[RMDB]
Conditions: 150 mM KOAc, 10 mM MgCl2 and 150 mM bicine (pH 8.5), 24 C. This 177-nucleotide RNA was probed chemically with DMS and 2A3. The DMS profile rests on 872 reads. Reactivities are given for positions 27 through 126.

RNA sequence: GGGAACGACUCGAGUAGAGUCGAAAACAGCAGUGCAAAUCCCCGUAAUUACGGCGAGCGUCCGGUGCACGAAGAUGAUCCGCUGAUGGAACUUUCGCGGAUUCUGGACUUCGACACGCCUGCUGAAGCUCCGAUCGAUAUUCGUAUCGAUCGGAGCAAAAGAAACAACAACAACAAC
Reactivity to DMS in 0.01 (KOAc 150mM, MgCl2 10mM, bicine 150mM(pH8.5), 24C), signal-to-noise 1, nucleotides 027 to 126: c040a020g000c000a020g000u010g070c050a140a230a150u000c070c080c010c150g000u000a300a100u030u010a060c010g040g000c150g020a110g010c040g000u010c010c000g020g010u000g000c040a190c000g000a020a020g010a090u000g000a080u010c000c000g000c040u020g020a040u000g000g050a150a040c200u000u000u010c040g010c000g010g000a030u000u020c020u000g000g010a060c010u000u000c000g020a270c030a080c010g010c000c000u000g000c000u000g000a170a140
Reactivity to 2A3 in 0.01 (KOAc 150mM, MgCl2 10mM, bicine 150mM(pH8.5), 24C), signal-to-noise 2, nucleotides 027 to 126: c010a010g040c000a000g030u090g200c040a070a080a180u110c030c050c000c000g050u110a230a220u280u160a060c060g000g030c050g000a090g060c050g060u080c010c000g080g040u040g040c110a060c170g000a050a000g030a030u110g010a010u000c000c000g000c110u100g030a050u070g050g140a130a140c070u100u140u040c030g010c000g000g010a000u090u040c000u000g030g040a050c000u010u000c010g000a000c010a010c050g000c010c000u000g000c020u010g070a060a070